[RMDB]
RNA sequence: GGGAACGACUCGAGUAGAGUCGAAAAGGGUUAUCCUCCUCAAGUCUCUUGAUAGUCUUGUUGACCUUCCGGAGGUCCCUCUCGAGCUCCUCCUUUCUUCUUCUUGCAUCGAUCCACUUUCCGAGUUACCGGUACUCGUUCGCGAGUACCAAAAGAAACAACAACAACAAC
Reactivity to DMS in 0.01 (KOAc 150mM, MgCl2 10mM, bicine 150mM(pH8.5), 24C), signal-to-noise 5, nucleotides 027 to 129: g000g010g030u000u000a050u000c000c000u000c000c000u040c030a060a120g060u080c020u010c010u040u030g030a050u000a040g000u000c030u040u050g030u040u090g020a100c070c050u030u030c090c110g050g030a090g040g030u030c000c050c030u000c020u050c030g020a090g000c130u040c000c020u020c050c030u000u000u000c030u000u000c050u030u010c040u010u010g030c080a100u030c050g030a170u000c030c070a030c060u020u030u040c000c000g020a050g000u040u030a060c130c070
Reactivity to 2A3 in 0.01 (KOAc 150mM, MgCl2 10mM, bicine 150mM(pH8.5), 24C), signal-to-noise 8, nucleotides 027 to 129: g030g010g000u070u060a080u110c000c000u010c000c000u050c030a050a150g170u000c000u000c000u000u000g000a020u030a040g020u020c020u050u090g030u040u100g060a050c010c000u040u070c050c050g070g020a020g000g020u020c000c000c000u010c000u020c010g030a020g000c050u020c000c010u010c000c020u020u040u050c000u040u010c000u030u000c010u010u040g010c010a070u040c030g080a070u040c040c010a060c020u050u070u000c010c000g010a020g050u040u070a090c040c020